[RMDB]
RNA sequence: GGGAACGACUCGAGUAGAGUCGAAAAGAUAUGGACUGAGGGAGAUGCCAGUCGGAAACGACUGGACAUCGACGAUCUCACAUGUCCUAAGUCAAAAGACCGCUAGCUGUUCGCAGCUAGCGGUCAAGGUAGGUAUUCCGUUCGCGGAAUACCUACCAAAAGAAACAACAACAACAAC
Reactivity to DMS in 0.01 (KOAc 150mM, MgCl2 10mM, bicine 150mM(pH8.5), 24C), signal-to-noise 1, nucleotides 027 to 126: g000a060u000a300u040g000g000a020c020u000g000a040g020g000g020a040g000a010u000g010c020c010a000g040u020c000g030g000a070a050a200c000g010a010c000u000g000g000a070c010a000u000c000g000a100c280g000a040u000c000u000c020a120c280a120u000g010u000c000c000u000a070a130g010u010c010a090a120a100a120g000a000c010c000g030c010u010a000g000c000u000g010u000u020c200g030c040a000g040c000u000a000g000c000g000g000u000c010a000a000